[RMDB]
RNA sequence: GGGAACGACUCGAGUAGAGUCGAAAAACUUCUUCGCCGCCCAGUGCUACCAGCAGCUCGGGGAUGAAUUGCUGGAAGGUGAGCAUCAUCAGGACGAAGCUGGCGUCGGCCUGUGCGAACUCGUCGGCGAGUAUAUGAACUUCGGUUCAUAUACUCGAAAAGAAACAACAACAACAAC
Reactivity to DMS in 0.01 (KOAc 150mM, MgCl2 10mM, bicine 150mM(pH8.5), 24C), signal-to-noise 4, nucleotides 027 to 126: a100c140u000u010c040u000u000c050g030c070c020g000c040c020c030a100g010u010g030c030u000a130c030c010a040g010c020a070g010c100u000c010g010g000g020g000a070u010g000a040a070u000u000g020c000u000g000g010a150a090g020g000u010g010a060g010c030a060u010c050a060u010c060a080g010g010a070c030g000a070a080g010c060u000g000g010c150g010u010c070g000g010c010c020u010g010u000g000c090g000a100a080c060u000c100g000u000c040g010g010
Reactivity to 2A3 in 0.01 (KOAc 150mM, MgCl2 10mM, bicine 150mM(pH8.5), 24C), signal-to-noise 4, nucleotides 027 to 126: a000c030u090u030c020u100u080c040g040c080c010g000c000c000c010a040g020u050g080c010u060a060c010c010a010g010c010a020g020c030u020c030g090g020g070g040a000u090g030a030a120u100u050g000c010u010g010g140a080a030g140g070u170g050a020g020c020a040u060c000a000u030c020a020g000g100a060c030g040a030a020g020c020u030g040g030c030g090u090c020g020g040c010c020u060g020u050g020c020g020a050a040c020u010c080g060u010c010g090g040

An RNA of 177 nucleotides, treated with DMS and 2A3 and read out base by base. The data come from the RNA Mapping Database (RMDB), library OK2TRN. For 2A3, 5,795 sequencing reads were counted. Values cover nucleotides 27 to 126.